[RMDB]
Source information
The record gives the reactivity of an RNA of 207 nucleotides to DMS and 2A3. For DMS the reverse transcriptase was MarathonRT. The 2A3 profile rests on 3,459 reads. For DMS, 6,834 sequencing reads were counted.
RNA sequence: GGGAACGACUCGAGUAGAGUCGAAAAAAGGGUGCGGUAAGAGCGCACCGCGCGGCUGGUAACAGUCCGUGGCACGGUAAACUCCACCCGGAGCAAGGCCAAAUAGGGGUUCAUAAGGUACGGCCCGUACUGAACCCGGGUAGGCUGCUUGAGCCAGCUAACUAAACAGCUUCGGCUGUUUAGUUAGAAAAGAAACAACAACAACAAC
Reactivity to DMS in 0.01 (KOAc 150mM, MgCl2 10mM, bicine 150mM(pH8.5), 24C), signal-to-noise 3, nucleotides 027 to 156: a100a080g010g020g030u010g020c080g030g010u000a080a140g000a170g030c020g030c060a030c010c010g000c000g020c060g010g000c000u000g010g010u000a180a260c000a010g000u000c000c030g010u000g010g040c010a060c040g020g010u000a080a120a070c010u010c020c020a060c050c030c030g020g010a100g020c020a110a130g020g030c010c020a040a060a120u010a110g000g000g010g010u000u000c020a110u000a070a130g000g000u010a070c070g000g000c060c040c030g000u000a100c070u010g000a040a060c010c010c010g040g000g020u000a100g020g010c000u000g000c000u000u010g000a160g010c020c010a110g000
Reactivity to 2A3 in 0.01 (KOAc 150mM, MgCl2 10mM, bicine 150mM(pH8.5), 24C), signal-to-noise 3, nucleotides 027 to 156: a000a010g080g000g000u020g000c030g000g010u020a040a020g000a010g010c000g000c000a000c020c000g010c000g000c000g010g000c010u010g010g040u080a160a040c010a010g060u080c040c010g000u020g000g010c030a030c100g010g000u070a100a090a070c010u000c030c000a120c030c070c060g010g000a020g000c060a060a030g080g000c020c020a050a080a030u220a080g000g030g000g000u020u020c040a070u100a300a140g060g000u010a020c010g130g040c050c050c030g000u010a000c030u090g010a010a000c000c030c000g000g040g000u060a040g000g000c020u020g020c030u040u050g030a000g000c000c000a010g000